[RMDB]
RNA sequence: GGGAACGACUCGAGUAGAGUCGAAAAGGCCGGGAGCCGCGCCAGUCGGAGCCCCCGGCCCAGCGUGGUCCGCCUCCCUCUCGGCGUCCACCUGCCCGGAGUACUGCCAGCGGGCAUGACCGACCCACUUGGUACGGUAGUUCGCUACCGUACCAAGAAAAGAAACAACAACAACAAC
Reactivity to DMS in 0.01 (KOAc 150mM, MgCl2 10mM, bicine 150mM(pH8.5), 24C), signal-to-noise 1, nucleotides 027 to 126: g020g030c000c000g030g000g010a120g020c030c050g030c040g010c080c070a080g000u030c070g000g040a120g000c000c090c030c010c010g000g030c000c020c000a000g010c110g020u010g000g000u010c210c070g020c040c010u000c050c030c010u000c010u010c070g000g000c010g000u010c010c110a050c010c040u000g000c010c000c010g000g000a080g000u020a060c050u010g000c010c030a120g000c060g010g000g080c010a020u010g040a090c070c000g000a140c000c040c040a210
Reactivity to 2A3 in 0.01 (KOAc 150mM, MgCl2 10mM, bicine 150mM(pH8.5), 24C), signal-to-noise 3, nucleotides 027 to 126: g020g000c010c000g000g000g000a020g070c060c030g010c030g070c040c030a050g120u170c030g040g010a050g020c030c030c000c010c010g020g000c010c000c000a020g020c020g030u030g020g010u100c060c020g000c000c010u080c020c020c000u070c040u060c020g020g000c000g010u020c020c000a020c000c010u010g000c000c030c000g010g020a090g040u070a060c040u050g040c010c000a050g060c050g000g010g020c040a050u060g060a040c020c030g050a060c020c000c000a050
This 177-nucleotide RNA was probed chemically with DMS and 2A3.
The 2A3 profile rests on 3,009 reads.
The RNA was probed in 150 mM KOAc, 10 mM MgCl2 and 150 mM bicine (pH 8.5) at 24 C.
Source: RMDB library RFM100, as collected in RNAgym.
DMS adducts were read by reverse transcription with MarathonRT.
2A3 adducts were read by reverse transcription with SuperScript II with manganese.